[RMDB]
RNA sequence: GGGAACGACUCGAGUAGAGUCGAAAAAGAAACAUGCGAGAAGAAGGAGUGUGCAAGAGCACAGGGACUUUACCUGAAAAGGCAACAGAUUGUUACCAUUAUCGGUCCGGAAAGCGUUAUCCUCCAUCCAGGACUUGGAGGUCUCUACGGGAGCCUAGGCACUCAUAAAUUUCGAUUUAUGAGUGCCAAAAGAAACAACAACAACAAC
Reactivity to DMS in 0.01 (KOAc 150mM, MgCl2 10mM, bicine 150mM(pH8.5), 24C), signal-to-noise 1, nucleotides 027 to 156: a150g030a100a080a080c040a080u000g030c070g020a100g030a070a100g000a080a050g000g020a140g120u000g030u010g060c040a060a170g020a130g060c000a100c060a050g070g000g000a120c050u000u010u010a030c000c030u010g000a030a090a090a070g000g000c020a080a040c050a040g020a160u020u000g050u000u000a050c020c000a130u000u010a090u030c060g000g000u000c070c020g030g020a050a020a090g000c050g000u000u010a030u010c020c010u000c000c000a050u000c030c010a150g000g010a080c030u000u000g000g020a030g000g000u010c030u050c020u000a090c030g010g000g010a060g030c010c020u000a130
Reactivity to 2A3 in 0.01 (KOAc 150mM, MgCl2 10mM, bicine 150mM(pH8.5), 24C), signal-to-noise 2, nucleotides 027 to 156: a000g130a000a080a000c060a030u100g010c040g000a020g000a040a030g020a000a020g020g000a010g060u020g000u010g070c050a110a110g020a020g080c010a030c010a050g000g000g030a030c020u050u050u140a020c020c010u060g000a050a030a020a010g060g030c030a020a010c000a020g070a080u070u070g010u060u060a030c020c050a050u090u000a060u250c100g000g010u040c020c040g010g000a120a040a010g040c060g060u030u100a080u140c000c010u000c050c010a000u040c000c010a000g050g050a090c090u050u040g010g000a000g010g030u040c020u010c000u030a040c110g030g000g000a000g000c000c000u010a020